[RMDB]
RNA sequence: GGGAACGACUCGAGUAGAGUCGAAAAGUAUCCUUUCCACAUACUAUUUGCAUUGCACAGCGAUAGUAUGGAUGGGACAUUGGUAUUUACAGUACUAAUGCAAAUACUGUAUUUUUCUAUAUAGUGCGAAUUGAUUUAGCUUCGGCUAAAUCAAUUCAAAAGAAACAACAACAACAAC
Reactivity to 2A3 in 0.01 (KOAc 150mM, MgCl2 10mM, bicine 150mM(pH8.5), 24C), signal-to-noise 1, nucleotides 027 to 126: g050u040a080u050c010c000u000u060u000c020c010a050c010a050u010a000c000u000a020u030u100u300g000c030a030u040u110g060c040a020c040a070g000c000g000a000u000a000g000u010a000u010g040g010a030u050g010g000g000a010c010a000u000u030g010g000u050a040u140u160u080a060c050a030g000u000a010c010u030a020a000u030g000c000a010a000a200u030a040c010u020g040u080a150u020u070u000u000u000c100u050a150u040a090u110a300g000u010g000c010
Reactivity to DMS in 0.01 (KOAc 150mM, MgCl2 10mM, bicine 150mM(pH8.5), 24C), signal-to-noise 1, nucleotides 027 to 126: g010u020a070u000c010c040u000u000u000c010c080a150c160a060u000a000c000u000a020u000u010u010g070c000a040u000u010g030c060a020c050a200g000c010g010a000u000a000g010u000a000u000g010g010a100u000g010g000g020a100c030a050u000u000g000g020u000a000u000u000u020a130c260a140g000u000a010c030u000a030a010u000g000c180a050a110a120u000a000c020u000g010u000a050u020u000u000u000u000c020u000a100u010a140u000a140g000u000g020c060